[RMDB]
RNA sequence: GGGAACGACUCGAGUAGAGUCGAAAAGGAAGCUUUAGAUAUGUUUCUUGAUGAAAUUAUCGAUCAUAAUACGAGAGUUUAGUAUGCUAACACGUGAACAGUUUGAAAAAAUCAUUAAAUUAGCACGUGAUAUUGAAAUAGAUUCAUAUCAAUUGGCUGAUAUGACGAGUUUCGACUCGUCAUAUCAAAAAGAAACAACAACAACAAC
Reactivity to DMS in 0.01 (KOAc 150mM, MgCl2 10mM, bicine 150mM(pH8.5), 24C), signal-to-noise 2, nucleotides 027 to 156: g010g000a140a150g000c030u000u000u000a180g020a080u020a010u000g020u010u000u010c000u000u000g010a130u000g030a060a040a040u000u010a050u000c000g000a140u010c140a120u000a030a040u000a180c010g000a190g020a150g000u010u000u000a090g010u000a020u010g010c060u000a050a090c020a190c190g040u000g010a040a080c080a100g020u010u000u020g020a000a050a070a040a070a060u000c040a030u000u000a050a060a050u000u000a090g000c000a030c030g000u010g020a040u000a050u000u000g010a070a080a120u010a080g000a140u040u000c020a040u000a070u000c010a030a120u000u010g000g010c080
Reactivity to 2A3 in 0.01 (KOAc 150mM, MgCl2 10mM, bicine 150mM(pH8.5), 24C), signal-to-noise 3, nucleotides 027 to 156: g070g000a070a030g020c020u100u100u170a070g030a000u000a000u070g010u000u030u030c010u060u090g060a090u090g040a110a080a080u170u110a110u110c010g040a020u040c060a040u110a240a010u120a100c030g010a020g000a010g100u030u060u090a060g010u040a040u150g060c040u080a090a010c000a000c020g000u000g060a060a020c050a130g000u020u050u060g060a140a100a010a000a010a040u070c020a010u010u140a040a150a000u060u020a060g040c010a000c020g020u020g040a030u010a050u130u070g050a070a040a010u040a010g040a020u080u000c010a000u020a000u030c010a020a140u220u020g030g000c040